[RMDB]
RNA sequence: GGGAACGACUCGAGUAGAGUCGAAAAAUUCACAGUGAUAAAGGCUUGGCCCGUUUUUGCUUCAGUUGUUUUGAUAAUAUAUGAUGUAUCAAUAUGAGCCGCUUUAAAAUCUUCUAAGAUGAAAUCAAAUCAGGGGAUGUUUCGACAUCCCCUGAUUAAAAGAAACAACAACAACAAC
Reactivity to DMS in 0.01 (KOAc 150mM, MgCl2 10mM, bicine 150mM(pH8.5), 24C), signal-to-noise 1, nucleotides 027 to 126: a050u020u010c020a090c050a090g000u000g020a090u010a070a060a060g000g000c000u000u020g020g010c020c050c080g000u010u010u000u030u000g020c080u000u010c080a080g000u000u000g000u000u010u010u030g020a070u050a040a070u000a100u010a120u020g010a000u020g010u030a000u030c040a050a090u050a090u050g000a100g000c050c020g000c030u000u000u000a060a020a030a160u000c040u000u010c120u020a010a120g000a060u000g020a050a060a070u000c080a000